[RMDB]
RNA sequence: GGGAACGACUCGAGUAGAGUCGAAAAAUGAACGUGGUGGGCGUAAGUUAGUAGAAGAUCUAAUGGUACGCGGUGGGUUUUCGACUGUACUCGAAACCACCACCACCACCAAGACGUUCCCACCGAACAAUAACAAGGCGUUCGCGCCUUGUUAUUGAAAAGAAACAACAACAACAAC
Reactivity to DMS in 0.01 (KOAc 150mM, MgCl2 10mM, bicine 150mM(pH8.5), 24C), signal-to-noise 2, nucleotides 027 to 126: a060u020g000a060a140c150g020u000g000g060u000g000g020g040c000g030u000a130a260g000u020u000a010g000u000a120g030a140a090g010a140u000c030u000a030a040u000g000g000u000a000c020g030c030g010g000u000g000g010g000u000u000u000u000c010g000a000c130u030g030u020a030c170u000c000g000a020a060a030c010c000a060c000c040a220c060c050a090c040c020a020c010c110a030a020g000a200c020g000u000u000c000c010c000a100c210c100g010a100a070
Reactivity to 2A3 in 0.01 (KOAc 150mM, MgCl2 10mM, bicine 150mM(pH8.5), 24C), signal-to-noise 2, nucleotides 027 to 126: a040u150g020a050a020c080g000u010g010g000u020g030g030g010c000g000u030a010a030g000u010u010a010g010u030a040g080a300a040g030a070u020c000u010a000a020u050g240g020u030a010c010g000c000g020g000u010g000g050g020u060u010u080u050c010g000a010c070u200g100u300a100c040u010c030g000a030a010a000c000c000a000c010c000a020c000c000a000c000c000a010c020c000a050a000g110a000c020g020u030u000c000c000c000a010c020c040g070a070a020

Chemical mapping of a 177-nucleotide RNA with DMS and 2A3. For DMS the reverse transcriptase was MarathonRT. For 2A3 the reverse transcriptase was SuperScript II with manganese. The data come from the RNA Mapping Database (RMDB), library M2PK90.